An RNA of 177 nucleotides, treated with DMS and read out base by base. Source: RMDB library TTRINS, as collected in RNAgym. DMS (dimethyl sulfate) methylates the pairing face of unpaired adenines and cytosines. For DMS, 1,381 sequencing reads were counted. DMS adducts were read by reverse transcription with MarathonRT.
RNA sequence: GGGAACGACUCGAGUAGAGUCGAAAAGAUAUGGAUCGUUGCCGUCCGUGUACAGACAUGCUGGAUAAGGAUCGGAAACGAUCCGUAACAGCAACAGCUGUACACGGACGGCACCGAUCCUAAGUCAGCUAAUAAGAUGCUUCGGCAUCUUAUUAGCAAAAGAAACAACAACAACAAC
Reactivity to DMS in 0.01 (KOAc 150mM, MgCl2 10mM, bicine 150mM(pH8.5), 24C), signal-to-noise 2, nucleotides 027 to 126: g000a080u000a300u030g020g000a000u000c010g000u000u000g000c000c000g040u000c000c010g060u000g000u010a000c000a060g030a080c090a290u010g000c000u010g000g000a130u000a110a280g000g000a030u000c000g030g000a130a100a240c010g020a010u000c010c000g010u010a070a230c000a000g020c000a010a060c300a140g020c000u000g000u000a000c020a010c000g000g000a000c000g000g000c000a000c000c000g000a000u010c000c000u000a000a060g000u000c070a180